[RMDB]
RNA sequence: GGGAACGACUCGAGUAGAGUCGAAAACAUACGGACUUCGGUCCGUAUGAAAGAACCACAAAUUGACGCAAACUUCCGCGUCAUCGCGAGGAAGCGAGGAAAAAAUCGAGGUGUUCGCACCUCGAAACCAAAGAUGCGAGUUCGCUCGCAUCUUUGGAAAAGAAACAACAACAACAAC
Reactivity to 2A3 in 0.01 (KOAc 150mM, MgCl2 10mM, bicine 150mM(pH8.5), 24C), signal-to-noise 1, nucleotides 027 to 126: c000a000u000a000c000g000g010a000c000u000u030c240g060g010u000c000c000g000u020a000u000g000a000a000a000g030a030a050c000c010a010c020a050a160a070u150u090g000a010c030g010c000a080a100a230c130u230u070c090c070g010c010g020u020c030a060u050c000g000c030g020a110g130g240a130a040g040c020g000a060g010g090a080a110a060a000a090a020u050c010g000a000g000g000u000g040u070u030c260g000c050a000c030c000u000c000g000a010a000a000
Reactivity to DMS in 0.01 (KOAc 150mM, MgCl2 10mM, bicine 150mM(pH8.5), 24C), signal-to-noise 1, nucleotides 027 to 126: c000a050u000a000c000g000g000a000c000u000u010c210g020g000u000c000c000g000u000a000u000g000a080a050a050g000a170a180c000c000a170c300a070a060a090u000u010g000a040c030g000c070a120a140a110c210u000u000c030c130g010c000g000u000c060a000u000c060g010c000g010a100g030g000a180a040g000c000g010a090g010g020a000a050a050a070a100a050u000c000g000a000g020g030u000g020u000u000c250g020c000a020c000c000u000c000g000a000a030a070
Source: RMDB library M2PK50, as collected in RNAgym. Structure probing data (2A3 and DMS) for a 177-nucleotide construct. The 2A3 profile rests on 1,236 reads. 2A3 adducts were read by reverse transcription with SuperScript II with manganese.